[RMDB]
RNA sequence: GGGAACGACUCGAGUAGAGUCGAAAAUAUUCCAUCAAGGGACAGUGAAAAUACUUGUCACCAAAGUUUCAUGCAGAGCUUACUUGCCCCUCACCUCAGUGAUCAGGUCAUUGGGAGCCAGAGGUCACUCUCAGAACAUCAGAGGAAUACACAGUGAAAAUUUACUUUUAUUCGUAAAAGUAAAUUUAAAAGAAACAACAACAACAAC
Reactivity to 2A3 in 0.01 (KOAc 150mM, MgCl2 10mM, bicine 150mM(pH8.5), 24C), signal-to-noise 3, nucleotides 027 to 156: u100a020u030u000c020c010a030u060c040a070a100g000g000g010a030c000a020g030u080g140a160a100a060a060u230a150c100u220u140g030u050c130a240c170c040a000a070a030g010u000u050u080c050a040u090g050c060a000g030a040g040c060u100u150a100c020u110u240g050c010c020c020c010u000c010a030c000c020u010c010a050g080u030g070a030u060c050a000g110g090u020c030a030u010u070g030g000g010a050g040c030c020a040g010a010g030g010u040c020a020c020u030c010u030c010a010g030a060a030c020a040u110c020a020g040a010g080g070a030a030u110a070c090a000c030a030g060u080g100a000
Reactivity to DMS in 0.01 (KOAc 150mM, MgCl2 10mM, bicine 150mM(pH8.5), 24C), signal-to-noise 3, nucleotides 027 to 156: u010a080u010u000c000c010a080u000c070a090a130g010g030g000a020c020a040g010u010g010a120a100a100a120u000a090c030u010u010g020u000c010a080c040c020a040a110a230g020u000u000u000c010a150u010g020c080a060g010a070g020c070u000u000a080c090u010u000g020c000c010c010c020u010c070a060c060c020u010c030a050g030u010g010a050u000c110a170g030g010u000c030a050u010u000g030g020g000a120g030c040c030a050g010a050g010g010u000c200a050c030u010c000u010c020a070g010a050a080c030a090u000c070a110g010a100g010g000a060a080u010a040c070a040c070a090g000u000g000a080
This 207-nucleotide RNA was probed chemically with 2A3 and DMS. The 2A3 profile rests on 1,768 reads. DMS adducts were read by reverse transcription with MarathonRT. The data come from the RNA Mapping Database (RMDB), library OK3TST.